[RMDB]
RNA sequence: GGGAACGACUCGAGUAGAGUCGAAAACUGCCUAUGCCAUGUAUUGUUCUAAGGUGGUGUAGUAGUCUGCCUGGCACUGCGAAUUUGGAGGCACAGAUGGUACAAUGAAGCACCUGCGGUCUCAUCGUCAAUUGACUCCUUUCGAGGAGUCAAUUGAAAAAGAAACAACAACAACAAC
Reactivity to 2A3 in 0.01 (KOAc 150mM, MgCl2 10mM, bicine 150mM(pH8.5), 24C), signal-to-noise 7, nucleotides 027 to 126: c010u030g040c000c010u030a020u030g010c020c020a070u110g120u160a230u130u180g120u160u100c090u200a090a090g130g000u020g000g010u020g010u000a030g000u000a000g030u030c020u010g030c000c000u030g040g020c060a030c050u020g020c050g070a130a140u150u030u130g150g010a020g010g030c030a010c030a150g150a070u080g030g050u080a070c040a080a080u300g060a150a020g050c030a010c010c020u060g020c060g040g020u020c010u000c020a100u090c030g070
Reactivity to DMS in 0.01 (KOAc 150mM, MgCl2 10mM, bicine 150mM(pH8.5), 24C), signal-to-noise 4, nucleotides 027 to 126: c030u000g000c130c030u000a020u010g000c000c000a020u000g010u000a090u020u050g030u000u020c110u020a090a140g010g030u000g020g000u000g020u000a040g000u020a030g000u020c020u000g020c020c020u020g000g030c050a080c050u000g010c040g020a060a080u020u010u030g010g000a040g010g010c030a080c060a050g000a080u010g000g020u020a070c120a130a140u040g030a120a150g010c040a040c030c020u000g000c120g010g020u000c020u000c020a130u040c100g010
This 177-nucleotide RNA was probed chemically with 2A3 and DMS. 2A3 adducts were read by reverse transcription with SuperScript II with manganese. 2A3 is a SHAPE reagent: it acylates the 2'-hydroxyl of flexible nucleotides of all four kinds. DMS adducts were read by reverse transcription with MarathonRT. Reactivities are rounded to 0.1 and cut off at 0 and 3.